RNA sequence: GGGAACGACUCGAGUAGAGUCGAAAAAACAGGAAACACAUAUGACAGAUCUCUUGUGGUUGAUGACGAGGAGACGUCCAUCCUUCUGUAUGACAUAUGGGAACAGGAUAACAGCCAGUGGCUGCAGAGACAGAGUUGAUUUCGAUCAACUCUGUCUAAAAGAAACAACAACAACAAC
Reactivity to DMS in 0.01 (KOAc 150mM, MgCl2 10mM, bicine 150mM(pH8.5), 24C), signal-to-noise 4, nucleotides 027 to 126: a060a060c050a050g020g010a060a060a060c100a090c050a050u000a050u020g000a090c100a060g000a070u010c050u050c030u000u000g040u000g010g050u000u000g010a040u000g000a050c070g000a100g000g010a080g030a130c100g020u000c020c070a060u000c020c020u020u010c020u000g000u010a040u020g000a090c050a200u030a050u020g000g010g000a070a050c050a090g000g000a070u020a050a130c060a010g010c000c030a130g020u000g040g010c020u000g020c080a050g010
Reactivity to 2A3 in 0.01 (KOAc 150mM, MgCl2 10mM, bicine 150mM(pH8.5), 24C), signal-to-noise 4, nucleotides 027 to 126: a000a000c170a090g020g020a060a100a000c140a000c000a060u090a030u170g050a030c030a030g030a090u040c070u020c000u100u110g080u060g050g060u000u100g040a170u140g020a010c010g030a020g090g050a080g000a020c030g020u050c010c000a070u030c020c000u050u010c040u050g060u040a110u110g040a030c020a040u060a040u070g050g000g030a040a060c040a080g110g000a030u070a160a050c020a000g010c000c010a110g090u130g060g000c010u030g000c050a060g040